Structure probing data (2A3 and DMS) for a 207-nucleotide construct. It was measured as part of the RMDB library RSTRND.

[RMDB]
RNA sequence: GGGAACGACUCGAGUAGAGUCGAAAACGGAGGUGAUGUGCCCAUUCAUCACCGAUGGGAUACGAGCUCAGACUGAUGGGAUCGCGGUUGGCCCUGUCCUCGUGUCAGCCGCUAAAACUUAGAGGAAUCGCGUCGCUGGAUCCUGCCCGUCGGAGCCCUAUACGACUUCGUUCGCGAAGUCGUAUAGAAAAGAAACAACAACAACAAC
Reactivity to 2A3 in 0.01 (KOAc 150mM, MgCl2 10mM, bicine 150mM(pH8.5), 24C), signal-to-noise 5, nucleotides 027 to 156: c010g020g020a050g000g000u010g000a010u000g010u050g030c010c030c010a020u040u040c000a010u000c000a000c000c000g000a000u020g010g020g030a030u070a190c110g050a080g040c040u040c070a050g030a150c050u070g010a000u040g000g030g000a020u020c040g000c000g030g000u040u070g020g000c000c010c060u050g070u080c020c000u050c010g010u010g010u020c010a010g010c010c000g010c040u010a020a040a030a030c060u110u190a030g000a010g020g100a020a030u140c120g010c040g100u040c030g040c090u070g060g000a050u030c010c010u030g030c000c010c000g010u020c020g020g010a010g020c000c000
Reactivity to DMS in 0.01 (KOAc 150mM, MgCl2 10mM, bicine 150mM(pH8.5), 24C), signal-to-noise 3, nucleotides 027 to 156: c050g000g010a300g030g040u020g030a020u000g000u000g000c050c050c050a140u010u010c010a010u000c010a040c000c000g000a240u020g000g000g010a240u010a070c070g010a120g000c030u010c030a200g010a130c090u020g020a060u000g020g010g020a040u000c050g020c020g000g040u000u010g020g030c010c040c020u010g010u010c060c000u000c000g020u010g020u000c000a030g020c000c000g000c060u010a010a030a060a110c120u000u010a070g010a080g000g000a050a070u010c040g020c140g020u000c040g010c010u010g010g000a090u000c010c010u000g030c010c000c050g000u000c040g020g010a060g020c050c090